[RMDB]
RNA sequence: GGGAACGACUCGAGUAGAGUCGAAAAUGAAAGUCCAUGGAGAGAAACAGACUUUGAGGCUGCGGCACUUGCCUGUGGUUUGCCGCUAUUGCCAAGCGUUGAAGAAUGCACAGGAGUUGUCAAUUGAGGAUGAUAUACCGUUCGCGGUAUAUCAUCCAAAAGAAACAACAACAACAAC
Reactivity to 2A3 in 0.01 (KOAc 150mM, MgCl2 10mM, bicine 150mM(pH8.5), 24C), signal-to-noise 4, nucleotides 027 to 126: u190g010a000a010a000g040u040c060c000a060u150g060g050a110g000a020g020a130a060a010c060a040g040a010c030u060u030u060g080a080g030g000c010u010g000c030g020g000c000a010c010u040u050g030c020c010u030g000u020g010g000u080u060u040g010c010c000g010c020u100a170u120u210g010c010c010a050a010g060c060g060u070u100g020a080a020g010a110a060u190g030c040a000c000a010g000g040a050g020u010u000g050u040c090a100a070u040u020g000a010
Reactivity to DMS in 0.01 (KOAc 150mM, MgCl2 10mM, bicine 150mM(pH8.5), 24C), signal-to-noise 1, nucleotides 027 to 126: u070g020a110a090a100g000u000c000c020a150u010g000g010a040g000a110g000a090a110a090c130a140g000a050c050u000u040u010g010a060g000g000c020u000g000c020g000g020c000a000c160u020u000g000c020c040u000g000u040g000g020u010u000u010g000c000c000g000c030u070a050u040u000g030c050c020a020a100g010c080g000u000u060g000a100a040g000a010a090u000g020c000a020c000a000g010g010a090g000u060u010g020u000c000a020a170u000u020g000a300

The data come from the RNA Mapping Database (RMDB), library OK1LIB.
This 177-nucleotide RNA was probed chemically with 2A3 and DMS.
Conditions: 150 mM KOAc, 10 mM MgCl2 and 150 mM bicine (pH 8.5), 24 C.
The DMS profile rests on 1,989 reads.
Reactivities are given for positions 27 through 126.